RNA sequence: GGGAACGACUCGAGUAGAGUCGAAAAUGAGAUCGAUGACGAGCAGUCGCGCUUUGUCGAAACCGUUGCUGCCCUGGCGCACCAUGAAGGCAUGGGCGCGCGAGUCACCGCCAGCCACACCACGGCACCGUCAUCCGUAAUUCGUUACGGAUGACGGAAAAGAAACAACAACAACAAC
Reactivity to 2A3 in 0.01 (KOAc 150mM, MgCl2 10mM, bicine 150mM(pH8.5), 24C), signal-to-noise 1, nucleotides 027 to 126: u200g000a050g010a100u130c090g000a000u070g000a050c040g040a020g000c070a010g080u080c050g050c000g040c090u060u070u160g090u080c040g010a070a010a000c000c000g070u060u060g020c050u060g000c000c010c030u030g000g000c010g010c010a110c020c020a000u050g060a230a100g170g050c030a020u040g060g000g000c030g000c000g000c060g040a000g000u040c000a020c040c000g060c000c030a040g000c000c000a090c000a010c010c000a010c030g060g000c000a030
Reactivity to DMS in 0.01 (KOAc 150mM, MgCl2 10mM, bicine 150mM(pH8.5), 24C), signal-to-noise 2, nucleotides 027 to 126: u010g000a100g000a090u000c010g010a030u000g020a090c060g020a040g080c060a090g010u040c110g050c120g000c070u020u000u000g040u000c050g000a050a050a120c170c120g000u000u000g020c050u000g020c040c030c030u000g040g000c010g000c010a080c000c040a040u020g010a200a200g020g000c050a030u010g000g000g030c080g040c030g010c020g000a110g010u010c040a090c040c060g000c040c020a050g010c010c040a130c020a120c070c020a070c070g000g000c120a230